[RMDB]
RNA sequence: GGGAACGACUCGAGUAGAGUCGAAAACAGUUUAAUAAAUAGCAUCUAGUACACAUUCAUUUUGUGUUGGAUACUGUGUUAGGUGCUGGAGGAAAAAAGAUGAAUAGAACAUCUUCUAUGUACUUGAUGCGCUCACAGUCUGGUUGUAGAGACUGUCCGUUCUGUAAAGAUUCGUCUUUACAGAACGAAAAGAAACAACAACAACAAC
Reactivity to DMS in 0.01 (KOAc 150mM, MgCl2 10mM, bicine 150mM(pH8.5), 24C), signal-to-noise 4, nucleotides 027 to 156: c030a140g020u010u010u000a090a140u010a060a100a150u000a030g010c000a010u000c000u000a040g010u000a020c010a020c020a030u000u010c100a100u000u000u000u000g030u010g020u000u010g020g000a030u000a040c070u000g040u000g010u000u000a030g040g030u000g040c010u000g000g010a130g010g000a000a080a110a050a040a030g010a070u010g000a100a180u010a160g020a120a110c030a020u000c020u000u000c020u000a110u010g000u000a060c030u000u000g010a080u000g000c060g020c040u010c040a060c030a050g010u010c030u000g020g020u010u000g020u010a120g000a150g000a130c000u000g010u010c010
Reactivity to 2A3 in 0.01 (KOAc 150mM, MgCl2 10mM, bicine 150mM(pH8.5), 24C), signal-to-noise 9, nucleotides 027 to 156: c020a010g040u110u150u190a250a180u180a090a100a080u210a030g000c000a000u010c010u010a010g040u050a010c020a000c010a020u020u060c030a050u060u140u130u280g220u090g040u090u050g020g000a020u020a090c040u030g010u000g010u060u040a010g000g000u000g000c010u010g010g010a030g010g020a040a020a010a030a010a000g020a020u050g030a100a150u130a250g110a090a050c010a020u000c000u050u000c020u060a080u180g030u030a030c010u030u070g040a040u100g110c090g010c030u070c040a010c000a010g010u000c010u060g090g010u050u010g020u070a050g010a000g000a090c000u010g010u010c030